[RMDB]
RNA sequence: GGGAACGACUCGAGUAGAGUCGAAAAGUGAUGCUCCUCAAUGUUCUGGGCGACACGCGCACUACAAUGUCAGUGAGAACAAGAAAAACGACUUUUGUCGAACCUACUUGAUCAAAAGAGUGGGGAAACCCCGGAAUCACAUAGACUCACUUGGGACCUCUUAUGGUGACUUCGGUCACCAUAAGAGAAAAGAAACAACAACAACAAC
Reactivity to 2A3 in 0.01 (KOAc 150mM, MgCl2 10mM, bicine 150mM(pH8.5), 24C), signal-to-noise 2, nucleotides 027 to 156: g000u010g000a030u070g060c060u070c060c020u050c030a040a130u060g020u060u040c040u010g030g080g060c040g050a040c030a030c080g150c040g090c030a030c050u180a090c140a150a140u160g070u120c050a010g030u070g070a060g020a080a040c050a060a050g110a090a110a010a010a000c020g030a050c010u100u140u150u300g000u000c010g010a020a010c000c000u000a010c000u020u050g030a080u130c090a000a000a030a100g010a000g000u030g000g000g000g010a060a070a060c010c010c010c030g000g010a010a000u050c030a030c000a060u110a020g000a010c000u000c000a010c000u000u020g040g080g060a090c010
Source: RMDB library PDB130, as collected in RNAgym.
The record gives the reactivity of an RNA of 207 nucleotides to 2A3.